Chemical mapping of a 170-nucleotide RNA with 2A3 and DMS. For DMS the reverse transcriptase was MarathonRT. The RNA was probed in 150 mM KOAc, 10 mM MgCl2 and 150 mM bicine (pH 8.5) at 24 C. The 2A3 profile rests on 5,339 reads. 2A3 adducts were read by reverse transcription with SuperScript II with manganese.
RNA sequence: GGGAACGACUCGAGUAGAGUCGAAAAUCCUCCUCCGGCCAGCUGCUUCUUCUUGUUCUCCAGGGCCUUCCUUCUUCUGUGCUCCUGCCUCUCCUUGUCGGUGAACCCCCUGGCCUUGGGUUUCCUCAUGGCUCAGCCUUCGGGCUGAGCAAAAGAAACAACAACAACAAC
Reactivity to 2A3 in 0.01 (KOAc 150mM, MgCl2 10mM, bicine 150mM(pH8.5), 24C), signal-to-noise 3, nucleotides 027 to 129: u000c000c020u000c000c010u000c000c000g030g000c020c000a000g030c010u060g040c010u040u020c000u060u000c000u070u090g020u040u020c050u030c040c010a020g000g000g030c000c040u020u010c020c000u060u090c040u040u010c020u070g160u070g040c020u000c000c000u040g050c010c000u010c000u050c000c000u040u030g080u130c030g030g010u080g090a040a020c000c000c000c000c040u020g010g000c000c060u000u000g020g000g000u000u020u000c010c000u070c040a100u070g050
Reactivity to DMS in 0.01 (KOAc 150mM, MgCl2 10mM, bicine 150mM(pH8.5), 24C), signal-to-noise 1, nucleotides 027 to 129: u040c070c010u010c070c030u040c030c040g030g050c050c030a110g020c050u010g040c050u020u040c000u040u000c000u000u000g030u000u000c000u040c030c140a100g070g000g070c030c030u010u040c030c050u020u070c030u010u010c080u010g020u080g030c000u000c000c060u020g000c080c010u020c010u010c000c050u000u050g000u010c080g040g010u000g040a090a120c010c000c000c000c010u040g010g030c020c020u000u000g010g040g050u000u000u000c000c000u000c080a110u040g060